Source information:
Chemical mapping of a 177-nucleotide RNA with 2A3 and DMS.
RNA sequence: GGGAACGACUCGAGUAGAGUCGAAAAUGAAGCAGGAAACGGAGCACAACUAUUUACUCAACGCCGUAAGCCAUUCUAUCUCUAUGUAGAUCCUGAAGGCAAAGGGAACUAUGACGAACCAGAUAUCGUCAUGCUAGUGGUUCGCCACUAGCAUGACAAAAGAAACAACAACAACAAC
Reactivity to 2A3 in 0.01 (KOAc 150mM, MgCl2 10mM, bicine 150mM(pH8.5), 24C), signal-to-noise 2, nucleotides 027 to 126: u090g000a020a020g030c040a010g050g060a060a030a000c050g000g010a030g090c050a010c000a140a030c050u100a140u120u160u160a170c100u070c060a060a010c100g030c000c000g090u060a000a050g000c030c030a060u090u040c010u020a100u010c060u000c000u060a300u300g050u100a030g010a030u000c010c000u080g010a090a000g130g010c020a040a010a000g090g030g000a020a000c050u000a090u160g050a040c090g010a050a010c010c010a090g000a090u150a050u080c040
Reactivity to DMS in 0.01 (KOAc 150mM, MgCl2 10mM, bicine 150mM(pH8.5), 24C), signal-to-noise 2, nucleotides 027 to 126: u000g010a060a080g010c010a010g040g040a060a110a060c090g030g000a020g010c050a040c090a100a110c080u000a160u010u000u000a120c110u000c040a100a140c130g020c010c020g020u000a090a070g000c040c020a050u000u000c060u010a050u000c060u010c030u010a090u000g010u000a060g010a030u010c100c020u000g000a060a070g000g000c120a070a100a140g000g020g000a030a050c050u000a050u000g010a070c030g000a000a070c090c070a070g000a110u000a110u020c120
The reactions ran in a buffer of 150 mM KOAc, 10 mM MgCl2 and 150 mM bicine (pH 8.5), at 24 C. For DMS, 949 sequencing reads were counted. In probing experiments dimethyl sulfate is read out at A N1 and C N3, which are open when not base-paired.